Chemical mapping of a 177-nucleotide RNA with 2A3 and DMS. The DMS profile rests on 1,177 reads. For 2A3, 659 sequencing reads were counted. It was measured as part of the RMDB library OK2TST. Reactivities are given for positions 27 through 126.
RNA sequence: GGGAACGACUCGAGUAGAGUCGAAAAUGGAAAGUAGUUAAGCAUGUAAAAAGUAAUGCAAUUGUCGUUGGCAAUACGAAGCAAACAUUAGGCAUUGGUGCAGGACAGAUGAAUCGAAUUUGUUCGAUCGAUGGAGUAUCUUCGGAUACUCCAUCGAAAAAGAAACAACAACAACAAC
Reactivity to 2A3 in 0.01 (KOAc 150mM, MgCl2 10mM, bicine 150mM(pH8.5), 24C), signal-to-noise 1, nucleotides 027 to 126: u110g010g050a060a020a040g110u080a030g060u100u080a050a010g000c040a000u050g040u220a080a000a050a110a030g070u040a090a000u000g000c000a060a110u070u080g090u110c090g110u090u090g070g000c010a040a050u030a080c030g030a050a050g000c020a020a060a060c040a030u090u130a000g040g010c050a040u000u170g030g000u080g050c020a010g010g000a000c000a040g040a070u110g020a070a040u060c090g080a000a070u130u070u100g080u010u080c030g020a060
Reactivity to DMS in 0.01 (KOAc 150mM, MgCl2 10mM, bicine 150mM(pH8.5), 24C), signal-to-noise 2, nucleotides 027 to 126: u010g010g000a170a030a130g020u000a040g010u000u000a060a130g040c000a020u000g000u020a060a080a080a140a050g010u010a050a020u000g020c050a100a090u010u010g000u000c050g070u000u000g000g010c050a040a050u010a070c120g000a090a080g020c100a020a020a000c100a030u010u000a070g020g000c090a100u000u000g010g030u000g010c070a080g050g000a060c070a060g010a050u020g000a110a100u010c090g010a030a090u000u000u020g010u000u000c000g030a050